[RMDB]
RNA sequence: GGGAACGACUCGAGUAGAGUCGAAAAAUCGCGCCUGGUCGGAACAUAACGACGGCGGGCCGGUGGGGAAUCAGGGGGCUACCGUGGGAUAUCGAUGAGACAGCCCCUCCGAUGGCACCAAGCGUCGCACACUGGCCAUACUUCGGUAUGGCCAGAAUUAAUUAGCAAGUUUCGACUUGCUAAUUAAAAAAGAAACAACAACAACAAC
Reactivity to 2A3 in 0.01 (KOAc 150mM, MgCl2 10mM, bicine 150mM(pH8.5), 24C), signal-to-noise 1, nucleotides 027 to 156: a000u010c000g010c000g030c000c000u100g070g030u050c050g040g060a200a080c040a170u170a200a010c040g000a010c000g050g020c000g000g000g030c030c000g020g000u050g020g000g000g040a070a100u060c060a170g020g000g050g000g000c020u070a060c030c020g020u080g000g060g020a060u110a080u260c130g030a060u110g000a040g020a100c040a020g010c010c000c030c000u000c000c030g010a030u030g010g050c030a010c050c040a060a030g040c020g020u040c010g000c060a040c020a000c010u000g010g000c040c000a000u010a010c000u010u090c190g080g000u000a000u030g010g000c000c000a000g000a000a000
Reactivity to DMS in 0.01 (KOAc 150mM, MgCl2 10mM, bicine 150mM(pH8.5), 24C), signal-to-noise 1, nucleotides 027 to 156: a090u020c010g000c080g060c010c000u000g000g010u000c020g000g010a160a300c110a080u010a130a100c030g010a060c010g030g010c020g000g000g000c020c070g000g000u000g000g000g000g000a120a040u000c080a130g010g000g020g050g040c000u000a040c040c000g050u010g000g010g010a130u000a140u010c030g010a110u050g000a300g010a070c020a050g000c000c000c000c000u030c030c030g000a060u000g010g020c040a070c050c010a030a110g000c030g000u000c040g020c090a090c100a130c000u000g000g000c020c010a000u000a010c000u000u010c280g000g010u000a000u010g030g010c020c000a020g000a000a050
An RNA of 207 nucleotides, treated with 2A3 and DMS and read out base by base. For DMS the reverse transcriptase was MarathonRT. For 2A3 the reverse transcriptase was SuperScript II with manganese. The RNA was probed in 150 mM KOAc, 10 mM MgCl2 and 150 mM bicine (pH 8.5) at 24 C.